[RMDB]
RNA sequence: GGGAACGACUCGAGUAGAGUCGAAAAGAUAUGGAACAUACGGACGGGAGCCUAAUCGGAAACGAUUAAGCGAGGAUCGUUUAUGUUCCUAAGUCAAAACCUCUUGAAGGUUCGCCUUCAAGAGGAACAUUCUUCACUACUUCGGUAGUGAAGAAUGAAAAGAAACAACAACAACAAC
Reactivity to DMS in 0.01 (KOAc 150mM, MgCl2 10mM, bicine 150mM(pH8.5), 24C), signal-to-noise 7, nucleotides 027 to 126: g000a030u000a170u000g000g000a010a010c010a010u010a020c300g020g000a020c020g010g010g000a060g010c000c010u000a000a000u000c010g000g010a080a060a080c000g010a000u000u000a000a020g000c000g010a120g000g000a040u000c010g010u000u000u000a010u000g000u000u000c010c000u000a000a060g000u000c020a120a060a120a130c000c000u000c000u000u000g010a030a010g010g000u000u010c230g010c010c000u000u000c000a010a000g000a010g000g010a020a040
Reactivity to 2A3 in 0.01 (KOAc 150mM, MgCl2 10mM, bicine 150mM(pH8.5), 24C), signal-to-noise 4, nucleotides 027 to 126: g010a010u050a010u080g000g000a000a010c000a010u080a070c210g250g040a000c040g140g180g090a010g000c000c000u000a000a000u010c000g020g000a030a020a010c010g000a000u000u010a020a000g030c020g040a220g090g140a160u200c000g000u020u060u020a010u000g000u000u000c000c000u000a070a000g020u010c020a010a020a110a290c000c000u000c000u010u000g000a000a000g060g000u030u110c270g160c020c000u000u000c000a000a000g000a000g000g010a000a000
The record gives the reactivity of an RNA of 177 nucleotides to DMS and 2A3. The reactions ran in a buffer of 150 mM KOAc, 10 mM MgCl2 and 150 mM bicine (pH 8.5), at 24 C. DMS adducts were read by reverse transcription with MarathonRT. It was measured as part of the RMDB library TTRDEL.